The data come from the RNA Mapping Database (RMDB), libraries RFM100 and RFMREP. Chemical mapping of a 177-nucleotide RNA with 2A3 and DMS. 2A3 adducts were read by reverse transcription with SuperScript II with manganese. Conditions: 150 mM KOAc, 10 mM MgCl2 and 150 mM bicine (pH 8.5), 24 C.
[RMDB]
RNA sequence: GGGAACGACUCGAGUAGAGUCGAAAAACGGAGCUCAUACGUGAGCUCCGAAUUCCCUUUUUCAACGAUAUCGCCCAUAAUACGCCCCCGGUUUGCAUACCGGGAAUCCAGGAGAGUUCAUGUACAACUAGCUCCUUCUAUUCGUAGAAGGAGCUAGAAAAGAAACAACAACAACAAC
Reactivity to 2A3 in 0.01 (KOAc 150mM, MgCl2 10mM, bicine 150mM(pH8.5), 24C), signal-to-noise 2, nucleotides 027 to 126: a000c000g020g000a010g000c000u000c000a000u010a010c270g120u040g010a000g000c010u000c000c000g010a000a000u000u000c000c000c000u000u030u000u030u050c010a000a000c050g030a070u030a020u200c080g040c010c060c060a070u070a170a030u080a230c050g020c030c020c000c000c050g000g040u040u140u140g160c050a080u110a150c000c000g000g000g030a000a000u060c000c000a000g010g010a110g010a040g070u010u110c080a160u230g020u140a150c060a140a060
Reactivity to DMS in 0.01 (KOAc 150mM, MgCl2 10mM, bicine 150mM(pH8.5), 24C), signal-to-noise 2, nucleotides 027 to 126: a070c010g000g010a010g010c000u000c000a030u000a090c210g040u010g000a000g000c000u000c010c000g010a000a020u010u000c000c050c000u000u030u000u050u050c080a030a130c090g000a090u000a110u010c030g000c010c040c030a100u000a140a040u010a100c110g000c110c070c000c030c020g010g000u020u000u020g030c170a090u010a090c000c020g020g010g020a040a010u040c040c060a090g000g010a150g000a120g010u000u000c020a070u010g060u010a020c150a070a230